Chemical mapping of a 207-nucleotide RNA with 2A3 and DMS. The data come from the RNA Mapping Database (RMDB), library ARCHII. The RNA was probed in 150 mM KOAc, 10 mM MgCl2 and 150 mM bicine (pH 8.5) at 24 C. The 2A3 profile rests on 1,090 reads. For 2A3 the reverse transcriptase was SuperScript II with manganese.
[RMDB]
RNA sequence: GGGAACGACUCGAGUAGAGUCGAAAACGUGUGGAAGCCACCGUUUGAGGAUCGAAGCACUAAAUUGAAUCAAACUAGCUUAAGUUUAGCGUGUCUGUCCGCAUGCUUAAGUGAAAUUAAAGACGAGACUAAACGUGUAGUACUGAAGGUAGAGUAACUCACUAUGAAGCUUCGGCUUCAUAGUGAGAAAAGAAACAACAACAACAAC
Reactivity to 2A3 in 0.01 (KOAc 150mM, MgCl2 10mM, bicine 150mM(pH8.5), 24C), signal-to-noise 2, nucleotides 027 to 156: c050g020u020g040u080g040g040a080a000g040c000c010a040c050c010g040u000u040u040g010a030g010g010a020u050c060g060a020a000g030c030a030c070u200a110a050a080u160u150g010a000a030u040c030a040a000a000c010u010a000g000c000u000u000a010a000g000u020u020u090a060g000c000g000u020g000u000c030u030g000u000c000c000g000c040a050u030g000c000u000u000a000a000g010u000g000a030a000a000u190u130a000a030a000g020a030c090g070a020g000a070c100u030a060a100a040c030g020u040g010u060a040g030u040a030c000u040g020a030a020g050g040u110a030g010a000g020u040a080a040
Reactivity to DMS in 0.01 (KOAc 150mM, MgCl2 10mM, bicine 150mM(pH8.5), 24C), signal-to-noise 1, nucleotides 027 to 156: c040g000u000g040u000g010g040a190a110g020c030c000a040c050c050g030u000u000u000g010a060g000g000a160u000c080g000a270a300g020c010a050c000u000a020a060a080u000u010g030a100a090u010c040a080a030a050c040u000a160g000c040u000u000a010a070g010u000u010u000a120g010c010g030u000g010u040c040u000g030u020c020c020g000c000a150u000g010c030u000u020a010a010g020u000g030a090a020a090u000u000a020a060a080g030a010c000g000a130g010a090c030u010a060a040a110c110g000u000g010u010a140g080u000a060c050u010g000a140a010g040g020u010a050g010a110g010u000a050a180

For DMS the reverse transcriptase was MarathonRT.